[RMDB]
RNA sequence: GGGAACGACUCGAGUAGAGUCGAAAAAACGGGGCUAGCCGUCAGGUGUUCCACCUCCCGAGAGGGGACGAGUGAGGCUUAUCCCGGGGAACUCGGCGAAUCGUCCCCACAUAGCAGGACCCAGGACCUAUGUGUAUUACUUCGGUAAUACACAUAGAAAAGAAACAACAACAACAAC
Reactivity to 2A3 in 0.01 (KOAc 150mM, MgCl2 10mM, bicine 150mM(pH8.5), 24C), signal-to-noise 3, nucleotides 027 to 126: a000a000c020g010g010g030g000c040u040a010g010c030c020g190u040c020a030g040g110u100g060u220u080c040c060a260c050c030u070c000c070c040g110a150g000a000g090g000g000g000a010c000g010a030g120u080g030a020g030g000c000u020u040a040u060c000c000c020g000g010g000g000a050a020c020u010c020g010g030c030g040a010a040u030c020g010u010c010c000c010c000a000c000a020u090a000g040c040a020g000g040a020c010c000c020a030g020g070a040c020
Reactivity to DMS in 0.01 (KOAc 150mM, MgCl2 10mM, bicine 150mM(pH8.5), 24C), signal-to-noise 5, nucleotides 027 to 126: a050a070c020g010g000g000g010c130u000a050g030c010c010g000u010c060a050g010g020u010g020u000u010c050c010a130c030c010u000c010c130c160g010a150g000a100g010g010g000g000a020c030g000a090g010u000g010a300g000g010c030u000u010a110u010c010c000c000g000g000g010g000a080a030c020u000c010g000g000c030g000a030a050u000c010g010u010c000c000c000c000a100c120a040u010a050g020c050a070g010g010a090c010c020c030a120g000g000a080c180
Chemical mapping of a 177-nucleotide RNA with 2A3 and DMS. The DMS profile rests on 5,277 reads. For 2A3 the reverse transcriptase was SuperScript II with manganese. For 2A3, 6,475 sequencing reads were counted. The RNA was probed in 150 mM KOAc, 10 mM MgCl2 and 150 mM bicine (pH 8.5) at 24 C.